[RMDB]
RNA sequence: GGGAACGACUCGAGUAGAGUCGAAAAGAUAUGGAGUCCUGACCUCCAACAGCUUAAUCGGAAACGAUUAAGACAUGGAGCGUCAGGGACUCCUAAGUCAAAAGAUCCACUCCUUCGGGAGUGGAUCCACCAUGGACAUGUUCGCAUGUCCAUGGUGAAAAGAAACAACAACAACAAC
Reactivity to DMS in 0.01 (KOAc 150mM, MgCl2 10mM, bicine 150mM(pH8.5), 24C), signal-to-noise 4, nucleotides 027 to 126: g000a030u020a300u000g000g010a010g030u010c000c000u000g000a020c010c000u000c000c000a010a080c300a220g000c000u010u000a000a000u000c010g000g000a180a070a300c010g010a020u000u000a010a010g000a030c110a200u020g000g000a010g010c290g000u000c000a030g010g010g010a010c000u010c000c000u000a010a070g020u010c050a070a100a160a130g000a000u000c000c000a000c000u000c000c000u000u040c280g040g020g010a010g020u000g000g000a000u000c010
Reactivity to 2A3 in 0.01 (KOAc 150mM, MgCl2 10mM, bicine 150mM(pH8.5), 24C), signal-to-noise 2, nucleotides 027 to 126: g050a030u120a060u210g000g000a000g000u000c000c000u000g000a010c000c010u000c010c020a110a110c120a120g120c000u000u010a020a010u000c010g080g010a130a060a050c010g000a000u000u010a000a010g040a010c030a070u090g010g010a010g020c180g020u000c010a020g020g020g000a000c000u000c000c000u010a100a010g070u010c060a070a040a090a130g000a000u000c000c010a000c000u000c000c000u080u150c300g140g000g000a020g000u000g000g000a000u000c000